An RNA of 177 nucleotides, treated with 2A3 and DMS and read out base by base. The RNA was probed in 150 mM KOAc, 10 mM MgCl2 and 150 mM bicine (pH 8.5) at 24 C. 2A3 adducts were read by reverse transcription with SuperScript II with manganese. It was measured as part of the RMDB library OK2TST. For 2A3, 5,762 sequencing reads were counted.
RNA sequence: GGGAACGACUCGAGUAGAGUCGAAAAAGACUGAGCUACAAUCUCAUAUCAACAAUCUUUAAUUCCGUAUAGCACUGAAAACAAGUUUAUUGGUAGGUUUGUAACAGAUUCAUUUUGGGAGCAAAACGUUAGUUACAAUCUUCGGAUUGUAACUAACAAAAGAAACAACAACAACAAC
Reactivity to 2A3 in 0.01 (KOAc 150mM, MgCl2 10mM, bicine 150mM(pH8.5), 24C), signal-to-noise 5, nucleotides 027 to 126: a000g050a030c040u030g010a010g060c030u040a030c020a030a080u030c050u030c060a080u030a020u060c010a010a050c010a030a060u030c020u030u190u090a100a110u040u010c010c010g020u040a040u060a110g100c080a000c030u010g020a010a030a040a040c050a030a020g010u000u040u060a070u050u040g040g000u020a020g000g030u050u050u030g020u020a050a010c010a020g080a140u080u090c010a050u060u100u110u100g030g040g030a100g060c060a010a140a020a020c070
Reactivity to DMS in 0.01 (KOAc 150mM, MgCl2 10mM, bicine 150mM(pH8.5), 24C), signal-to-noise 5, nucleotides 027 to 126: a090g010a070c080u000g000a100g020c100u000a040c040a050a050u000c030u010c050a130u010a050u000c030a020a030c060a020a040u000c010u000u010u000a080a210u000u010c010c060g010u000a100u000a110g020c150a040c030u000g000a020a020a050a140c170a050a030g010u000u010u000a060u010u010g010g010u000a030g000g010u000u000u000g000u000a040a070c050a030g010a090u000u000c040a100u000u000u000u000g000g000g010a090g020c110a060a060a050a100c240